[RMDB]
RNA sequence: GGGAACGACUCGAGUAGAGUCGAAAACAGCCGGUCUACGGCUACGCCUUAGGGACAAGCGACUUGUCGGGAGGAUUCAGCUGGACGAACUUUGGCAACUCGCUGAGCAGCGGUUUCCAGAGGUUCGGAAACUUCCUCUCCAACACGGCUACCCGCGCAGACGGGUGAAGUUCGCUUCACCCGUCUGAAAAGAAACAACAACAACAAC
Reactivity to 2A3 in 0.01 (KOAc 150mM, MgCl2 10mM, bicine 150mM(pH8.5), 24C), signal-to-noise 1, nucleotides 027 to 156: c080a000g020c030c000g020g000u190c130u120a120c040g040g050c000u020a050c180g050c000c020u050u060a070g030g030g000a080c060a100a020g040c030g230a260c110u030u080g030u070c010g030g010g000a000g010g080a010u280u300c070a040g040c200u070g000g040a020c000g010a000a010c030u010u040u030g000g030c020a000a000c030u230c260g010c000u110g300a080g230c120a000g000c010g000g020u000u000u000c010c020a000g000a070g130g100u050u000c000g010g010a060a000a000c000u030u020c010c000u030c000u000c030c000a020a040c080a010c100g000g010c000u070a040c000c010c030g000c020g120

Chemical mapping of a 207-nucleotide RNA with 2A3. It was measured as part of the RMDB library OK3TST. The reactions ran in a buffer of 150 mM KOAc, 10 mM MgCl2 and 150 mM bicine (pH 8.5), at 24 C. Reactivities are given for positions 27 through 156. The 2A3 profile rests on 644 reads.